[RMDB]
RNA sequence: GGGAACGACUCGAGUAGAGUCGAAAAGAUAUGGACCCAAGAGCUUUUGACGCUGGGUCGGAAACGACCCUGCGAUAAGCUCUGGGUCCUAAGUCAAAAUCUUACUGUGCUUCGGCACAGUAAGAAAGAUUCGAUCAGAGUUCGCUCUGAUCGAAUCAAAAGAAACAACAACAACAAC
Reactivity to 2A3 in 0.01 (KOAc 150mM, MgCl2 10mM, bicine 150mM(pH8.5), 24C), signal-to-noise 1, nucleotides 027 to 126: g000a010u040a010u080g000g000a010c040c010c010a170a070g040a000g050c110u290u300u300u300g050a020c010g000c020u020g010g000g000u000c000g000g000a040a010a000c020g020a000c050c010c020u040g000c020g000a020u080a160a060g000c000u000c010u000g000g010g030u040c000c020u010a000a000g010u000c000a000a060a040a280u030c000u010u010a010c020u000g000u010g000c010u030u170c200g040g030c020a000c020a010g010u010a010a010g010a030a000a000